[RMDB]
RNA sequence: GGGAACGACUCGAGUAGAGUCGAAAAAGCCUGGUCGAUACGUCGACCAGGCAAUGCCGCCACAACGGCUUCCUGGCGUGGCGGAUCUCUUCCAAUGGAGCAACGCUCCGGAUACGUCCGGAGCGAAAAAAGCUCUGCUUCUUCGGAAGCAGAGCAAUCAAACGUAUAAGUUCGCUUAUACGUUUGAAAAAGAAACAACAACAACAAC
Reactivity to 2A3 in 0.01 (KOAc 150mM, MgCl2 10mM, bicine 150mM(pH8.5), 24C), signal-to-noise 1, nucleotides 027 to 156: a020g300c000c000u000g000g000u000c000g020a030u010a050c190g040u010c000g010a010c000c000a000g000g000c010a000a000u000g000c000c000g020c010c000a000c000a020a110c080g070g030c030u240u090c010c010u050g010g000c010g000u000g000g010c040g000g010a000u070c090u020c000u090u100c040c050a110a260u250g000g000a020g000c020a070a030c020g040c000u010c000c020g000g000a080u070a030c220g100u050c010c000g000g000a000g000c000g010a000a000a000a000a000a000g010c000u000c000u000g010c000u000u010c000u030u040c120g110g000a010a000g000c000a000g000a000g000c000a000a000
Source information: Conditions: 150 mM KOAc, 10 mM MgCl2 and 150 mM bicine (pH 8.5), 24 C. An RNA of 207 nucleotides, treated with 2A3 and read out base by base. Source: RMDB library M2RFPK, as collected in RNAgym. Values cover nucleotides 27 to 156. Values are in units of 0.01, from 0 to 300, in steps of 10.